[RMDB]
Background
Chemical mapping of a 177-nucleotide RNA with DMS and 2A3. Conditions: 150 mM KOAc, 10 mM MgCl2 and 150 mM bicine (pH 8.5), 24 C. The data come from the RNA Mapping Database (RMDB), library RFM100. For DMS, 1,839 sequencing reads were counted.
RNA sequence: GGGAACGACUCGAGUAGAGUCGAAAACGUUGCGUAUUGCUACAACACUUGGUUAGCUAUUUAGCUUUACUAAUCAAGACGCCGUCGUGCAGCCCACAAAAGUCUAGAUACGUCACAGGAGAGCAUAACCAGCAGUGUUUUUCGAAACACUGCUGGUAAAAGAAACAACAACAACAAC
Reactivity to DMS in 0.01 (KOAc 150mM, MgCl2 10mM, bicine 150mM(pH8.5), 24C), signal-to-noise 2, nucleotides 027 to 126: c060g030u020u000g010c060g010u040a140u030u010g020c050u000a100c230a100a090c270a260c060u000u000g000g000u000u000a010g020c230u020a090u020u030u030a140g000c140u000u000u010a120c060u010a040a030u040c010a000a030g020a150c150g000c040c020g000u050c090g000u000g000c080a100g020c000c000c050a040c180a080a040a150a070g050u000c070u030a090g000a120u000a080c060g000u020c000a050c110a030g000g000a100g000a160g000c070a120u010a140
Reactivity to 2A3 in 0.01 (KOAc 150mM, MgCl2 10mM, bicine 150mM(pH8.5), 24C), signal-to-noise 3, nucleotides 027 to 126: c030g010u040u110g000c000g020u080a070u140u170g030c020u140a070c030a160a000c020a010c020u060u010g040g000u010u030a040g020c160u040a070u140u100u090a110g040c040u030u060u080a010c000u040a000a010u030c010a010a000g020a050c020g020c040c000g040u080c000g000u040g030c000a030g110c010c020c010a050c060a020a150a000a020g060u030c020u030a010g010a020u040a070c100g020u030c040a000c010a030g090g030a070g010a020g030c060a020u040a050